[RMDB]
This 177-nucleotide RNA was probed chemically with DMS and 2A3. For DMS, 1,948 sequencing reads were counted. For 2A3 the reverse transcriptase was SuperScript II with manganese. DMS adducts were read by reverse transcription with MarathonRT.
RNA sequence: GGGAACGACUCGAGUAGAGUCGAAAAAAAAAGGACCUACAGCCGAGCGAGUGACUGAAAACGGCAAAGUGACGAAGCAUCGUUAUACCUAAAUGGUCGUAGCGAAAUAAGAGUUGUUCCCAGUAAACAACUGGUAUAUCUUCGGAUAUACCAGUUGAAAAGAAACAACAACAACAAC
Reactivity to DMS in 0.01 (KOAc 150mM, MgCl2 10mM, bicine 150mM(pH8.5), 24C), signal-to-noise 2, nucleotides 027 to 126: a030a040a030a090a070g000g000a070c040c020u000a070c050a120g000c070c020g060a140g050c060g000a090g050u000g000a060c070u000g000a060a050a080a070c090g000g000c080a070a070a100g030u000g010a050c040g000a140a100g000c060a110u000c000g000u000u000a020u000a000c000c010u010a040a070a050u030g010g010u010c050g050u000a080g000c000g000a030a120a070u000a100a130g000a010g020u000u000g010u000u000c000c000c000a100g000u000a050a060a080
Reactivity to 2A3 in 0.01 (KOAc 150mM, MgCl2 10mM, bicine 150mM(pH8.5), 24C), signal-to-noise 3, nucleotides 027 to 126: a070a010a020a020a010g090g000a010c010c000u000a000c030a020g050c000c030g050a020g050c040g020a110g130u080g070a060c040u050g070a040a050a070a060c040g040g000c040a070a070a010g100u080g040a020c020g030a040a020g030c020a060u030c010g010u010u010a040u010a040c000c010u120a220a210a110u230g010g010u070c080g000u010a010g000c000g040a030a070a080u170a120a060g000a010g000u000u000g000u000u010c000c000c000a000g000u030a000a060a020